[RMDB]
RNA sequence: GGGAACGACUCGAGUAGAGUCGAAAAAUUGAUGUGGGUUUUAACUUGUUGCCGUUCGGGACGUUGACGAAAUGGAGCGAUUUGACCCGUCUUGAAACACGGACCAAGGAGUCUAACAUGUGUGCAAUCAUCCCUGCUACUUCGGUAGCAGGGAUGAAAAAGAAACAACAACAACAAC
Reactivity to DMS in 0.01 (KOAc 150mM, MgCl2 10mM, bicine 150mM(pH8.5), 24C), signal-to-noise 2, nucleotides 027 to 126: a030u010u010g000a040u010g000u010g040g030g030u000u000u000u000a050a110c080u060u020g000u000u040g000c040c010g000u000u040c030g010g060g000a070c020g060u010u000g010a150c000g020a080a020a030u030g000g000a080g010c080g010a050u030u000u000g010a080c040c030c020g000u000c040u000u030g000a120a090a080c080a190c030g000g000a060c080c010a060a060g000g000a290g000u000c020u000a050a080c070a080u000g060u000g050u000g000c080a070a100
Reactivity to 2A3 in 0.01 (KOAc 150mM, MgCl2 10mM, bicine 150mM(pH8.5), 24C), signal-to-noise 1, nucleotides 027 to 126: a030u120u130g010a010u000g050u040g210g000g000u050u050u080u080a150a130c020u120u070g040u100u300g000c000c000g000u000u000c040g000g000g040a120c060g000u000u050g020a200c150g200a000a080a300u150g040g010a040g000c200g060a160u020u030u150g030a110c000c000c000g000u000c020u040u190g030a020a020a020c110a000c040g000g000a000c020c020a010a060g070g050a100g000u000c040u040a060a000c020a040u050g000u000g020u020g000c000a050a000
Structure probing data (DMS and 2A3) for a 177-nucleotide construct.
The DMS profile rests on 2,374 reads.